Chemical mapping of a 177-nucleotide RNA with DMS and 2A3. The RNA was probed in 150 mM KOAc, 10 mM MgCl2 and 150 mM bicine (pH 8.5) at 24 C. 2A3 adducts were read by reverse transcription with SuperScript II with manganese. It was measured as part of the RMDB library OK1LIB. The DMS profile rests on 3,095 reads. Reactivities are rounded to 0.1 and cut off at 0 and 3.
RNA sequence: GGGAACGACUCGAGUAGAGUCGAAAAAGGAGCCGCAGUCAGAUCCUAGCGUCGAGCCCCCUCUGAGUCAGGAAACAUUUUCAGACCUAUGGAAACUGUGAGUGGAUCCAUUGGAAGGGCAGGCCCAUCAGCCUAUUGGUUUCGACCAAUAGGCUGAAAAAGAAACAACAACAACAAC
Reactivity to DMS in 0.01 (KOAc 150mM, MgCl2 10mM, bicine 150mM(pH8.5), 24C), signal-to-noise 2, nucleotides 027 to 126: a110g000g020a080g020c030c100g060c010a040g000u000c070a050g010a100u000c010c000u010a080g000c100g010u010c020g010a110g000c040c020c040c010c040u000c020u000g030a100g010u000c060a150g040g000a050a140a260c030a040u000u000u000u010c010a080g010a110c030c030u020a080u020g010g000a080a090a070c010u000g010u010g000a070g010u010g010g000a110u000c000c010a090u020u000g020g010a060a100g000g000g020c020a040g030g000c000c000c030a130
Reactivity to 2A3 in 0.01 (KOAc 150mM, MgCl2 10mM, bicine 150mM(pH8.5), 24C), signal-to-noise 3, nucleotides 027 to 126: a000g070g010a030g000c040c000g000c060a060g030u080c030a020g020a070u010c000c040u040a030g000c000g050u040c010g010a010g030c050c010c000c010c000u000c020u040g060a040g070u060c060a030g010g040a040a070a020c040a050u020u000u040u050c030a080g010a220c000c010u170a150u250g020g050a030a110a110c010u020g010u040g070a030g030u050g030g020a020u000c020c000a040u010u080g040g030a040a030g030g000g000c020a010g040g000c010c000c000a020